The record gives the reactivity of an RNA of 177 nucleotides to 2A3 and DMS. High DMS reactivity at an A or C suggests that its Watson-Crick edge is free. The 2A3 profile rests on 20,288 reads. For DMS, 14,539 sequencing reads were counted.

RNA sequence: GGGAACGACUCGAGUAGAGUCGAAAAGACUGGCGUGCAUAUGCUUUUUUUUUUUUAGCAUAUGCGCAGGCACGGUACCGUUCAAGCCAGAGUACCUCUACCAUAGCCUGCGAAGGUAGAAAAUAGAGGGAUCCCUUUAGUUCGCUGGAGGGAUCCCAAAAGAAACAACAACAACAAC
Reactivity to 2A3 in 0.01 (KOAc 150mM, MgCl2 10mM, bicine 150mM(pH8.5), 24C), signal-to-noise 9, nucleotides 027 to 126: g070a010c010u000g000g010c020g020u030g010c010a000u000a000u000g040c000u040u060u040u010u010u010u000u000u000u010u010u060a000g000c000a000u000a000u000g000c000g000c000a000g000g000c010a000c050g050g080u190a170c130c080g020u050u090c080a100a010g000c000c000a010g010a010g050u050a070c010c020u010c000u010a010c000c000a030u050a050g010c000c000u010g010c020g010a070a030g010g000u020a010g070a030a050a010a020u180a030g110a110
Reactivity to DMS in 0.01 (KOAc 150mM, MgCl2 10mM, bicine 150mM(pH8.5), 24C), signal-to-noise 3, nucleotides 027 to 126: g000a100c000u000g000g000c000g010u010g000c010a000u000a000u000g000c000u010u010u010u000u000u000u000u020u010u020u000u000a010g010c010a000u000a000u000g010c010g030c000a030g000g000c020a090c050g000g000u020a090c140c030g010u010u000c030a050a070g010c000c010a000g010a110g010u010a100c030c040u000c020u000a010c010c000a130u010a110g000c000c010u000g000c010g000a090a080g000g000u000a010g000a070a070a080a090u030a050g000a300